Conditions: 150 mM KOAc, 10 mM MgCl2 and 150 mM bicine (pH 8.5), 24 C. Structure probing data (DMS) for a 207-nucleotide construct. For DMS, 4,705 sequencing reads were counted. The data come from the RNA Mapping Database (RMDB), library RNAMAK.

RNA sequence: GGGAACGACUCGAGUAGAGUCGAAAACUAACUAGGAUUCGUCCUAGUUAGAAAAACCGUAGGUCCUAAAGGCUUUGAUCACCAUGUUCGAAAGAGCAUAAGGUGGGAGCCUGAUGGACCUAAACGGAAAAAAGGCCCGAAGUUCGCUUCGGGCCAAGAUACAUAUAUCGUUCGCGAUAUAUGUAUCAAAAGAAACAACAACAACAAC
Reactivity to DMS in 0.01 (KOAc 150mM, MgCl2 10mM, bicine 150mM(pH8.5), 24C), signal-to-noise 2, nucleotides 027 to 156: c000u010a000a000c010u010a020g000g010a080u010u000c280g030u010c020c010u000a000g080u010u000a010g000a060a050a080a110a170c000c000g070u000a060g050g010u000c010c000u010a230a270a030g020g000c010u000u000u010g000a100u010c020a000c010c010a090u000g010u000u010c020g010a110a080a220g010a040g000c030a010u000a020a080g000g000u000g000g010g010a030g000c000c020u030g000a240u000g020g000a020c000c000u000a000a040a040c000g000g010a020a040a120a130a170a150g020g020c000c000c000g010a050a020g050u000u000c300g000c000u000u000c000g010g010g010c000c000a000a010